[RMDB]
RNA sequence: GGGAACGACUCGAGUAGAGUCGAAAAUGGCUUCUCCUGGGCGAUCGCUCGCUGUUUUUGUGGCUGGCUUUCAACGGGCUGGAGGAGCCGGGAGCGGAGGCGGAGGACCGAGCCAAAAACGUCAGCCUAUAGAGGAAGCUGUUCGCAGCUUCCUCAACACGAGUUUAAAUUUCGAUUUAAACUCGUGAAAAGAAACAACAACAACAAC
Reactivity to 2A3 in 0.01 (KOAc 150mM, MgCl2 10mM, bicine 150mM(pH8.5), 24C), signal-to-noise 3, nucleotides 027 to 156: u110g000g000c000u000u000c000u020c020c010u090g050g030g010c050g120a170u140c120g020c030u020c020g000c020u030g110u030u060u020u050u090g070u050g020g000c040u010g000g000c010u040u060u060c040a070a040c050g030g000g020c020u050g020g010a020g010g010a000g000c000c000g000g020g000a040g010c080g010g030a050g040g030c080g020g040a060g030g020a020c040c050g020a020g030c050c060a100a020a050a000a000c070g010u010c010a010g000c010c020u090a120u080a080g000a000g000g010a000a000g000c010u010g010u070u080c150g000c050a000g000c000u000u000c000c000u000c000a000a000
Reactivity to DMS in 0.01 (KOAc 150mM, MgCl2 10mM, bicine 150mM(pH8.5), 24C), signal-to-noise 1, nucleotides 027 to 156: u000g030g010c010u000u000c000u010c010c000u020g020g040g050c040g000a080u000c120g000c020u000c100g000c000u010g020u020u000u000u000u000g040u000g020g030c020u010g000g110c000u010u000u020c030a120a120c050g050g020g000c000u010g020g020a080g030g000a050g040c020c020g010g000g000a100g030c070g000g000a080g020g020c010g010g000a140g020g000a120c040c000g000a080g000c010c090a050a030a020a060a050c100g010u010c020a020g030c000c000u000a180u000a140g020a040g010g010a060a100g010c000u010g050u000u000c200g050c020a070g000c000u000u000c000c000u000c040a010a050